[RMDB]
RNA sequence: GGGAACGACUCGAGUAGAGUCGAAAAUGACUCUGGUUCUGUGUGUACCCUUGAGGAGCACUGGUACUUUAAAAUUACCAAUUGAACCAAAGGUACUAUUGAAAUUUGGAGCAGAGGAGUGGACCUCUGUACCGAACGGAUUCGUCCGUUCGGUACAAAAAGAAACAACAACAACAAC
Reactivity to 2A3 in 0.01 (KOAc 150mM, MgCl2 10mM, bicine 150mM(pH8.5), 24C), signal-to-noise 1, nucleotides 027 to 126: u030g030a000c000u000c000u060g050g150u030u000c000u000g060u000g020u020g020u070a020c020c000c000u000u080g100a100g080g020a040g000c060a010c040u010g000g000u040a000c000u050u120u180a000a160a090a090u050u010a000c000c020a020a050u030u060g040a010a120c000c000a040a000a000g000g000u030a020c000u050a060u140u170g170a140a080a100u210u180u170g050g000a020g060c020a010g010a000g010g020a010g010u060g000g000a030c000c020u140c050
Reactivity to DMS in 0.01 (KOAc 150mM, MgCl2 10mM, bicine 150mM(pH8.5), 24C), signal-to-noise 2, nucleotides 027 to 126: u000g000a270c010u000c030u000g000g000u000u000c000u000g010u050g010u030g000u000a060c000c020c010u010u000g010a110g000g000a300g000c080a020c080u020g010g010u000a000c130u010u000u000a080a070a090a150u010u000a000c000c000a010a060u000u010g020a190a110c030c010a010a040a030g000g000u000a030c060u000a110u000u000g010a100a050a160u000u000u010g020g010a070g030c030a010g000a040g010g020a210g010u000g010g020a230c070c020u010c080

Chemical mapping of a 177-nucleotide RNA with 2A3 and DMS.
DMS adducts were read by reverse transcription with MarathonRT.
For 2A3, 997 sequencing reads were counted.
It was measured as part of the RMDB library OK2TRN.
The RNA was probed in 150 mM KOAc, 10 mM MgCl2 and 150 mM bicine (pH 8.5) at 24 C.
Values cover nucleotides 27 to 126.